[RMDB]
The record gives the reactivity of an RNA of 177 nucleotides to DMS. Reactivities are given for positions 27 through 126. The reactions ran in a buffer of 150 mM KOAc, 10 mM MgCl2 and 150 mM bicine (pH 8.5), at 24 C. It was measured as part of the RMDB library OK2TST.
RNA sequence: GGGAACGACUCGAGUAGAGUCGAAAAGAUGUCAUUUCAGGCGUUAUGCAAGAUUUUGUGGAGCAGUUUGCUGAGCAAUUACAACCUUUUGGUGUUGAAUUAAUGAACACUUUGGUCCAACAGUUUAUGGUGGGUAUUAGUUCGCUAAUACCCACCAAAAAGAAACAACAACAACAAC
Reactivity to DMS in 0.01 (KOAc 150mM, MgCl2 10mM, bicine 150mM(pH8.5), 24C), signal-to-noise 2, nucleotides 027 to 126: g010a160u010g010u010c040a050u010u010u000c080a120g000g000c010g020u010u000a040u010g020c040a040a060g000a140u000u000u000u000g030u010g010g010a190g010c090a060g010u000u000u000g010c020u030g000a170g010c090a040a030u000u000a120c080a050a060c050c020u000u010u000u000g000g020u010g050u000u000g020a090a090u000u010a050a050u000g010a050a030c040a040c030u000u010u000g030g020u000c030c040a040a090c210a080g000u000u020u000a120
DMS adducts were read by reverse transcription with MarathonRT.